[RMDB]
RNA sequence: GGGAACGACUCGAGUAGAGUCGAAAAUACCAGUCGGCAGCGCAGGACCCGGAAGCGUUCAAGCGCUCAGUCCAGGCGCUCCACCUGGCGAGCAAUACCAGCAAGGACCAACUGGACUACGCGAAAGAGUACAUGAAGAACCAGACCGUAAUCAGGGAAAGUACGAAUUCUUCGGAAUUCGUACUUUAAAAGAAACAACAACAACAAC
Reactivity to DMS in 0.01 (KOAc 150mM, MgCl2 10mM, bicine 150mM(pH8.5), 24C), signal-to-noise 1, nucleotides 027 to 156: u000a140c030c030a020g010u010c010g000g030c080a010g040c040g050c020a300g020g020a040c040c090c060g010g040a070a050g020c090g080u000u000c120a090a280g020c000g000c080u000c010a140g000u000c000c020a140g030g040c010g000c080u030c000c040a140c090c030u000g000g060c020g000a110g000c030a070a170u020a060c010c010a150g010c050a120a090g000g000a180c100c030a090a040c000u010g000g000a140c010u000a060c040g000c070g010a070a070a160g000a120g040u000a050c120a180u000g040a070a060g010a060a100c000c020a090g010a100c040c010g000u000a010a140u010c060a120g010g040g000
Reactivity to 2A3 in 0.01 (KOAc 150mM, MgCl2 10mM, bicine 150mM(pH8.5), 24C), signal-to-noise 2, nucleotides 027 to 156: u180a000c000c000a000g020u030c050g030g020c120a000g000c010g000c010a020g050g000a020c010c040c060g140g030a140a030g000c000g040u140u140c180a140a030g040c010g000c010u010c040a010g000u040c000c010a040g050g030c020g000c020u000c000c000a000c000c000u040g040g000c060g040a020g050c040a070a050u060a180c040c020a000g010c040a060a080g070g010a080c060c000a030a040c110u040g020g000a080c030u060a030c100g010c000g060a060a080a030g000a020g040u030a060c060a090u140g010a060a050g000a020a020c010c040a030g010a010c020c000g020u120a050a010u130c050a030g000g000g100
Structure probing data (DMS and 2A3) for a 207-nucleotide construct. For 2A3 the reverse transcriptase was SuperScript II with manganese. Values cover nucleotides 27 to 156. It was measured as part of the RMDB library OK3TST.